The data come from the RNA Mapping Database (RMDB), library OK1LIB. This 177-nucleotide RNA was probed chemically with 2A3 and DMS. Values cover nucleotides 27 to 126. For 2A3, 1,814 sequencing reads were counted. For DMS, 1,481 sequencing reads were counted. The RNA was probed in 150 mM KOAc, 10 mM MgCl2 and 150 mM bicine (pH 8.5) at 24 C.

RNA sequence: GGGAACGACUCGAGUAGAGUCGAAAAGAAUAAAUAGGGAGGUCAGGGUCAGGAGACCGCCGCUGAACCCAGGAUAACCCUCAACGUCGGCGGUCAAAGCGACGAAAGACAGAGACACGUCGCAAAGGACUACCAUGGAGUUCGCUCCAUGGUAGUCAAAAGAAACAACAACAACAAC
Reactivity to 2A3 in 0.01 (KOAc 150mM, MgCl2 10mM, bicine 150mM(pH8.5), 24C), signal-to-noise 2, nucleotides 027 to 126: g010a000a030u250a100a040a060u180a020g100g000g000a110g050g030u080c070a010g030g000g000u000c020a000g000g080a190g020a080c000c000g000c010c000g000c000u010g000a030a140c000c010c060a000g100g020a000u040a140a230c010c050c010u000c020a150a140c090g160u060c000g000g070c000g010g000u000c000a000a000a000g000c010g000a000c000g070a160a040a040g050a000c120a040g120a000g020a060c040a000c010g000u000c010g000c000a000a050a000g030
Reactivity to DMS in 0.01 (KOAc 150mM, MgCl2 10mM, bicine 150mM(pH8.5), 24C), signal-to-noise 1, nucleotides 027 to 126: g000a200a020u010a020a000a030u060a040g060g000g000a130g030g030u000c010a060g000g030g040u000c000a080g120g030a240g000a000c000c000g000c070c000g040c000u040g000a090a010c020c030c010a160g010g040a040u000a010a010c060c000c000u050c140a060a090c190g050u020c050g040g000c000g000g020u010c060a000a030a040g030c020g010a020c040g060a100a090a020g000a120c120a030g000a050g000a250c220a110c020g000u000c000g000c000a020a060a070g000